[RMDB]
RNA sequence: GGGAACGACUCGAGUAGAGUCGAAAAGUAAUGCGUUGUACCCCAGCCAUUCCUAGAUGCAAAGUACAUAUUCCAGAGAACAAUAUCUCUCUCUGUGUAAAGAUAUCGAAGAAGAUGAUUAUCGCUAUCACUACAUCCAGUUCGCUGGAUGUAGUGAAAAAGAAACAACAACAACAAC
Reactivity to 2A3 in 0.01 (KOAc 150mM, MgCl2 10mM, bicine 150mM(pH8.5), 24C), signal-to-noise 1, nucleotides 027 to 126: g090u150a000a130u170g060c000g010u100u060g020u090a080c050c000c000c000a040g040c000c000a090u030u040c000c010u000a040g030a080u050g040c040a140a050a020g070u030a010c020a010u100a060u170u150c020c000a010g000a010g000a060a020c060a180a120u050a180u140c090u030c020u020c000u000c020u050g020u010g040u130a010a050a040g040a010u030a020u130c020g010a050a020g040a030a040g050a120u200g000a010u130u170a070u110c020g030c070u000a030
Reactivity to DMS in 0.01 (KOAc 150mM, MgCl2 10mM, bicine 150mM(pH8.5), 24C), signal-to-noise 4, nucleotides 027 to 126: g000u000a070a060u020g020c110g020u000u000g010u000a120c050c030c010c040a060g010c090c040a100u010u010c000c010u000a180g000a030u010g010c100a070a170a080g000u000a040c090a050u000a060u000u010c080c120a020g000a050g010a040a070c100a090a110u000a110u000c050u000c020u000c030u000c090u020g020u010g010u010a030a050a110g000a070u020a020u020c020g000a060a180g020a070a070g000a130u000g000a060u020u000a070u010c080g000c060u000a110
An RNA of 177 nucleotides, treated with 2A3 and DMS and read out base by base. Reactivities are rounded to 0.1 and cut off at 0 and 3. The RNA was probed in 150 mM KOAc, 10 mM MgCl2 and 150 mM bicine (pH 8.5) at 24 C.